RNA sequence: GGGAACGACUCGAGUAGAGUCGAAAAGCAUGAGAAUUAGAAACGUACCGGGCAUUGACGGACUUCGGGGAAUCGCUGUCUUGGCCGUGAUCGUCUAUCACUUCUAUGGCGCCGCCCUGCCGGGUGGCCAUGUGCCCAGAUUCGUCUGGGCACAUGGAAAAGAAACAACAACAACAAC
Reactivity to 2A3 in 0.01 (KOAc 150mM, MgCl2 10mM, bicine 150mM(pH8.5), 24C), signal-to-noise 4, nucleotides 027 to 126: g040c040a030u120g090a040g030a120a070u120u110a050g050a080a130a020c030g000u030a040c010c070g000g050g020c030a050u040u120g010a010c000g030g010a050c050u080u070c190g080g000g020g080a050a050u100c080g000c070u040g000u000c000u040u050g040g060c020c000g030u050g030a090u110c010g040u000c040u050a070u070c020a020c050u060u000c020u050a080u110g140g000c070g010c020c000g000c000c000c010u050g090c050c070g020g020g010u010g000g000
Reactivity to DMS in 0.01 (KOAc 150mM, MgCl2 10mM, bicine 150mM(pH8.5), 24C), signal-to-noise 6, nucleotides 027 to 126: g010c040a030u000g000a060g000a060a070u000u010a080g010a070a120a050c050g020u000a170c230c020g000g010g000c030a070u010u000g010a040c050g000g010a050c110u000u010c160g020g010g010g010a120a070u000c150g000c020u010g010u010c010u000u000g000g020c010c010g020u000g010a090u010c050g010u010c050u000a100u000c060a050c100u000u000c040u010a060u000g010g010c070g000c010c010g010c000c000c010u000g030c190c140g010g020g020u000g000g000
The data come from the RNA Mapping Database (RMDB), library OK2TST. The record gives the reactivity of an RNA of 177 nucleotides to 2A3 and DMS.